Source: RMDB library OK1LIB, as collected in RNAgym.
The record gives the reactivity of an RNA of 177 nucleotides to 2A3 and DMS.
High DMS reactivity at an A or C suggests that its Watson-Crick edge is free.
RNA sequence: GGGAACGACUCGAGUAGAGUCGAAAAUUUUGAGAAGAAUUGUUAAUUCUUUAGAUCUUUCCAUGUUCUGCAGUACUGCUUCCCUACUAGAACGAUGCGGGAGAUCAGCAGGUGUGAUCGGAAUAUACGGGAGUAGUACUUUCGAGUACUACUCCCGAAAAGAAACAACAACAACAAC
Reactivity to 2A3 in 0.01 (KOAc 150mM, MgCl2 10mM, bicine 150mM(pH8.5), 24C), signal-to-noise 2, nucleotides 027 to 126: u030u040u050u130g190a150g050a070a020g030a000a010u000u040g170u100u290a140a000u030u000c060u050u040u050a040g000a080u000c000u000u000u000c000c080a080u070g090u000u050c030u020g070c050a120g000u100a080c020u040g070c000u010u050c000c000c000u020a040c020u040a010g060a080a040c120g020a010u080g030c230g000g000g000a010g010a080u020c040a000g040c010a030g060g030u070g050u070g080a150u240c040g000g110a030a000u120a020u060a120
Reactivity to DMS in 0.01 (KOAc 150mM, MgCl2 10mM, bicine 150mM(pH8.5), 24C), signal-to-noise 1, nucleotides 027 to 126: u020u000u040u020g000a090g020a040a060g020a070a070u000u000g020u000u020a090a010u000u000c000u020u000u010a070g000a000u000c030u000u000u070c010c070a050u030g000u030u020c020u000g050c120a030g020u000a030c100u060g000c100u000u070c000c020c000u000a090c070u000a020g000a060a050c110g070a000u050g000c040g070g000g000a050g000a050u020c070a090g000c050a040g010g000u000g000u000g060a060u000c040g000g020a050a070u000a030u030a180

The DMS profile rests on 1,794 reads. The RNA was probed in 150 mM KOAc, 10 mM MgCl2 and 150 mM bicine (pH 8.5) at 24 C.